[RMDB]
RNA sequence: GGGAACGACUCGAGUAGAGUCGAAAAGUAACGUGGGCUUGUAAUCCAAGUGGAGACAUCAAAGUGGUUGAAUAUUGGGCUGUACCAGAUGGUUGGGCUUGGUGGGCUAAUUUCUGACUUGCCCUAUCCAAGCUUAGAGUUGGAUCAUGUGGCCCAACGCUCAUAGAAAGUUCGCUUUCUAUGAGCGAAAAGAAACAACAACAACAAC
Reactivity to 2A3 in 0.01 (KOAc 150mM, MgCl2 10mM, bicine 150mM(pH8.5), 24C), signal-to-noise 1, nucleotides 027 to 156: g010u020a150a030c050g000u020g000g040g000c050u110u030g070u130a100a070u000c060c010a070a000g050u070g070g000a040g030a020c000a030u090c110a060a080a000g100u050g090g080u080u100g060a100a050u050a070u080u010g010g000g000c010u000g010u020a070c030c000a050g020a170u090g050g110u040u040g020g000g000c000u010u000g020g000u040g000g000g000c050u030a040a100u000u250u230c130u210g070a070c010u040u030g000c000c000c000u050a060u110c020c030a010a010g000c000u010u000a000g000a020g010u030u080g010g010a020u070c070a010u070g010u010g020g000c010c000c000a000a000
Chemical mapping of a 207-nucleotide RNA with 2A3.